Chemical mapping of a 177-nucleotide RNA with DMS and 2A3.
Reactivities are given for positions 27 through 126.
For 2A3 the reverse transcriptase was SuperScript II with manganese.
The RNA was probed in 150 mM KOAc, 10 mM MgCl2 and 150 mM bicine (pH 8.5) at 24 C.

RNA sequence: GGGAACGACUCGAGUAGAGUCGAAAAGAUAUGGAUUCGCAUACUACCCACCUCCAUACCAGGCGUUUGACGAAGUUCGGAAACGAACUUCCGAGCCUGAAUGGAGAGGUAUGCGAAUCCUAAGUCAUCCGUUAAGUAGGUUCGCCUACUUAACGGAAAAAGAAACAACAACAACAAC
Reactivity to DMS in 0.01 (KOAc 150mM, MgCl2 10mM, bicine 150mM(pH8.5), 24C), signal-to-noise 3, nucleotides 027 to 126: g010a090u010a300u010g010g000a010u000u000c000g000c000a020u010a000c010u010a140c060c050c120a300c120c000u010c000c000a010u010a080c160c020a010g000g000c010g010u010u010u000g000a300c300g000a010a010g010u020u000c020g010g000a140a150a240c010g010a020a010c020u010u000c000c020g000a090g000c000c000u000g010a020a020u000g000g000a000g020a070g010g010u010a000u000g010c000g010a010a000u000c010c000u000a030a080g010u010c030a200
Reactivity to 2A3 in 0.01 (KOAc 150mM, MgCl2 10mM, bicine 150mM(pH8.5), 24C), signal-to-noise 1, nucleotides 027 to 126: g050a050u210a150u300g000g020a010u000u010c010g000c020a010u000a010c010u140a210c040c050c040a070c010c020u020c010c000a040u040a300c160c000a000g030g040c070g100u280u300u300g050a050c020g020a010a000g020u000u000c000g000g010a070a120a090c010g010a010a000c010u010u040c010c000g020a000g030c010c010u000g010a000a000u010g000g000a000g000a010g000g000u000a000u000g000c000g000a000a000u010c000c000u000a010a000g010u030c020a090